[RMDB]
RNA sequence: GGGAACGACUCGAGUAGAGUCGAAAAUAGGCACCAAAGGUGCCAUGUCUACAACCCCGAGUAGAUACACAUCUAUCACCAGCUAUCAAUGUCUCAAUAUAUACACAAACUCAGGGGCGAUGAGAUCUAGAGACAACACACUAAAGAUAGCCUACUAGAGAAGGAAAAAGUUCGCUUUUUCCUUCUCAAAAGAAACAACAACAACAAC
Reactivity to DMS in 0.01 (KOAc 150mM, MgCl2 10mM, bicine 150mM(pH8.5), 24C), signal-to-noise 2, nucleotides 027 to 156: u000a060g050g020c030a110c000c020a120a110a150g100g070u010g020c000c040a050u020g020u000c010u020a060c000a040a220c000c020c010c080g020a140g010u000a030g010a080u000a080c130a080c090a080u000c100u010a100u010c050a170c010c010a110g000c010u010a030u010c010a100a110u000g000u000c030u010c010a060a080u000a150u010a170u010a090c190a120c080a150a100a060c010u000c020a090g050g030g020g040c070g050a060u000g000a090g000a140u010c050u000a140g010a070g040a050c010a070a120c090a060c090a110c100u010a010a050a170g010a080u000a060g000c040c030u010a090c090u020a280
Reactivity to 2A3 in 0.01 (KOAc 150mM, MgCl2 10mM, bicine 150mM(pH8.5), 24C), signal-to-noise 4, nucleotides 027 to 156: u110a020g000g010c000a000c020c000a190a150a110g030g000u000g010c000c000a010u020g010u000c010u010a050c020a100a110c020c000c000c010g020a010g000u020a000g010a010u090a080c060a000c000a090u090c040u170a130u110c040a010c120c030a010g000c010u010a020u030c010a080a110u070g030u000c000u010c000a090a030u050a020u050a000u050a250c030a030c060a130a200a070c030u060c070a040g020g000g020g000c020g100a070u130g010a020g010a030u050c040u120a080g000a000g020a020c000a030a110c090a000c010a010c040u160a070a040a000g010a000u010a000g000c010c000u030a040c010u050a060